[RMDB]
RNA sequence: GGGAACGACUCGAGUAGAGUCGAAAAGACUCACCAGAUGGCUUCCUAAGUAUUGACAUUGAUGUGAUAAAUUCUUUGAAAGAAGUUUCAUGACCAUGAAAAGUGAAAAGAGAAAUGGUAACUUAUCGUACUUAACCCUUUUCGAAGGGUUAAGUACAAAAGAAACAACAACAACAAC
Reactivity to DMS in 0.01 (KOAc 150mM, MgCl2 10mM, bicine 150mM(pH8.5), 24C), signal-to-noise 3, nucleotides 027 to 126: g000a070c030u000c000a050c030c080a230g000a060u010g000g010c170u010u030c020c010u000a050a070g010u040a060u030u030g010a110c080a050u030u000g010a030u010g000u000g000a050u020a050a080a090u010u010c020u030u000u010g000a110a080a110g000a070a060g010u000u010u020c030a050u000g010a130c070c040a040u020g000a080a060a100a080g020u020g000a050a050a090a050g010a100g010a080a100a040u010g000g000u000a060a110c030u000u010a060u020c150
Reactivity to 2A3 in 0.01 (KOAc 150mM, MgCl2 10mM, bicine 150mM(pH8.5), 24C), signal-to-noise 4, nucleotides 027 to 126: g000a000c000u000c000a020c020c030a020g010a040u050g030g020c100u020u020c000c000u010a040a010g060u020a120u070u180g060a040c040a020u040u170g100a120u120g110u020g040a040u110a070a120a030u080u020c030u090u060u100g110a070a080a030g050a080a000g030u030u070u060c050a070u150g030a060c060c000a020u070g090a030a030a040a070g190u200g100a050a070a080a060g110a020g030a030a120a020u010g060g010u030a040a030c010u050u060a050u120c070
Chemical mapping of a 177-nucleotide RNA with DMS and 2A3. 2A3 adducts were read by reverse transcription with SuperScript II with manganese. Conditions: 150 mM KOAc, 10 mM MgCl2 and 150 mM bicine (pH 8.5), 24 C. Source: RMDB libraries RFM100 and RFMREP, as collected in RNAgym.